[RMDB]
RNA sequence: GGGAACGACUCGAGUAGAGUCGAAAAUCAUGCUCGCCUGAAGGGUGGUCUUAUUUUAAAGUUUGACUCUGGCACCGUUAGCAAGACUUCAGACUGGAAGUGCAAGGUGACAGAUGUACUUUUCCCCCACAAUACAGUCCUUCGGGACUGUAUUGUGAAAAGAAACAACAACAACAAC
Reactivity to DMS in 0.01 (KOAc 150mM, MgCl2 10mM, bicine 150mM(pH8.5), 24C), signal-to-noise 2, nucleotides 027 to 126: u000c110a020u000g010c030u000c050g010c020c000u010g030a140a090g020g010g050u000g010g000u000c010u000u000a060u000u000u000u010a010a020a070g010u000u020u010g010a080c120u000c000u000g020g010c010a020c010c000g010u010u010a180g010c040a210a080g020a290c010u000u000c010a080g010a210c250u020g010g010a020a010g000u000g010c010a040a080g010g000u000g000a050c010a010g000a020u010g020u000a020c010u000u000u000u000c000c000c020c200
Reactivity to 2A3 in 0.01 (KOAc 150mM, MgCl2 10mM, bicine 150mM(pH8.5), 24C), signal-to-noise 2, nucleotides 027 to 126: u030c000a010u050g020c040u040c050g010c020c010u080g190a150a070g140g040g000u010g020g010u000c010u020u020a050u000u070u000u030a090a040a040g010u020u120u160g100a060c040u010c000u020g010g000c000a000c010c000g050u030u120a060g000c040a090a010g030a140c010u000u010c020a140g040a300c130u280g070g040a010a020g000u040g030c020a000a040g000g000u020g010a000c000a000g000a000u060g030u030a050c020u000u020u000u020c020c000c000c020
Source information
Conditions: 150 mM KOAc, 10 mM MgCl2 and 150 mM bicine (pH 8.5), 24 C. The record gives the reactivity of an RNA of 177 nucleotides to DMS and 2A3. Source: RMDB library 15KREP, as collected in RNAgym. The DMS profile rests on 2,269 reads.